[RMDB]
RNA sequence: GGGAACGACUCGAGUAGAGUCGAAAACCAGCGUGUGAUUCGUCACACGCUGGAAAAACCGUAGGUCCCAGUGUGGAGCUGUACUUCGAAAGAGGUAUACAGCGAUGAAACACGGGACCUAAACGGAAAAAUCCACGAGUGUUCGCACUCGUGGAAAGUCAGACAAAAUGUUCGCAUUUUGUCUGACAAAAGAAACAACAACAACAAC
Reactivity to 2A3 in 0.01 (KOAc 150mM, MgCl2 10mM, bicine 150mM(pH8.5), 24C), signal-to-noise 1, nucleotides 027 to 156: c000c000a000g000c020g020u020g020u000g010a040u060u150c240g050u070c140a000c000a000c000g000c000u000g010g020a000a000a000a080a000c020c000g040u020a040g030g010u020c030c020c050a150g020u020g010u000g000g000a020g000c000u000g000u000a000c000u010u000c000g010a030a030a020g000a000g050g010u080a160u050a120c050a000g010c000g010a300u050g000a000a000a000c000a010c010g000g000g020a000c000c000u000a000a000a000c000g010g090a000a200a000a000a070u030c000c030a000c000g000a000g000u050g040u160u150c210g120c120a000c000u030c000g020u030g000g010a000a000a000

The record gives the reactivity of an RNA of 207 nucleotides to 2A3. The data come from the RNA Mapping Database (RMDB), library RNAMAK. The RNA was probed in 150 mM KOAc, 10 mM MgCl2 and 150 mM bicine (pH 8.5) at 24 C. The 2A3 profile rests on 797 reads.